[RMDB]
RNA sequence: GGGAACGACUCGAGUAGAGUCGAAAAUGAAAUAAAGCGCACCAAGAUGGAGGUGCGCAACCAGCGUGUCCAUGGAUCACGCUUCCACGCGUCUACCAAGACGCGAAAGGUAUUACAAAUAAAAAAAGUUAUGCAUCAGAUUCGUCUGAUGCAUAACAAAAGAAACAACAACAACAAC
Reactivity to 2A3 in 0.01 (KOAc 150mM, MgCl2 10mM, bicine 150mM(pH8.5), 24C), signal-to-noise 2, nucleotides 027 to 126: u040g000a020a030a020u190a060a110a030g000c000g000c000a000c000c000a050a040g130a110u270g090g100a130g000g000u010g000c000g000c000a000a020c020c010a000g010c000g000u000g020u030c060c050a110u180g070g010a050u130c010a000c000g000c000u050u020c030c000a040c000g000c000g000u010c000u020a110c060c010a040a000g000a010c000g000c000g000a030a020a000g030g020u020a010u070u060a090c060a030a100a060u280a080a160a040a030a000a000a020
Reactivity to DMS in 0.01 (KOAc 150mM, MgCl2 10mM, bicine 150mM(pH8.5), 24C), signal-to-noise 2, nucleotides 027 to 126: u000g000a110a070a070u020a050a160a150g000c010g020c020a010c020c000a100a100g020a200u010g000g010a160g000g000u000g000c000g020c010a030a010c060c020a080g010c010g020u000g000u000c020c060a120u010g020g020a010u000c010a010c000g000c000u000u000c000c010a160c000g010c000g010u000c010u000a100c300c300a060a060g000a000c000g000c000g000a000a040a130g010g000u000a030u000u000a090c130a070a060a110u070a030a010a050a070a080a060a100
This 177-nucleotide RNA was probed chemically with 2A3 and DMS.